[RMDB]
RNA sequence: GGGAACGACUCGAGUAGAGUCGAAAAUAUGCCUUGGAAUGAAAGACAAUUCCGAAUCCGCUUUGUCUACGAACAAGGAAGCUAUAAGUAAUGCAACUAUGAAUCUCAUGGAGAGUUCGAUCCUGGCAGGAUGUUGUACGUUCGCGUACAACAUCCUAAAAGAAACAACAACAACAAC
Reactivity to 2A3 in 0.01 (KOAc 150mM, MgCl2 10mM, bicine 150mM(pH8.5), 24C), signal-to-noise 3, nucleotides 027 to 126: u240a020u090g050c000c000u020u010g010g030a090a020u180g070a230a090a000g010a000c040a040a020u050u030c050c080g020a010a080u050c080c020g050c000u030u020u000g020u000c000u030a060c150g040a060a000c010a000a040g040g060a010a070g030c010u100a060u060a300a030g050u050a150a140u170g010c050a020a040c030u030a040u260g070a100a090u010c000u010c050a130u200g040g020a090g010a000g030u030u060c010g000a010u000c000c010u010g040g000c060
Reactivity to DMS in 0.01 (KOAc 150mM, MgCl2 10mM, bicine 150mM(pH8.5), 24C), signal-to-noise 1, nucleotides 027 to 126: u000a070u000g020c000c000u000u000g020g000a030a040u010g000a070a010a040g030a010c000a000a050u000u090c040c100g000a010a100u030c050c050g000c000u000u000u000g040u080c000u000a180c090g000a090a030c000a030a110g000g000a070a110g010c050u000a150u060a080a000g000u050a080a070u000g000c040a120a110c120u010a000u040g000a170a030u000c100u020c020a080u030g000g030a070g050a090g000u040u030c000g000a060u000c000c000u000g030g010c180

The record gives the reactivity of an RNA of 177 nucleotides to 2A3 and DMS. The reactions ran in a buffer of 150 mM KOAc, 10 mM MgCl2 and 150 mM bicine (pH 8.5), at 24 C. The data come from the RNA Mapping Database (RMDB), library OK1LIB. For DMS the reverse transcriptase was MarathonRT.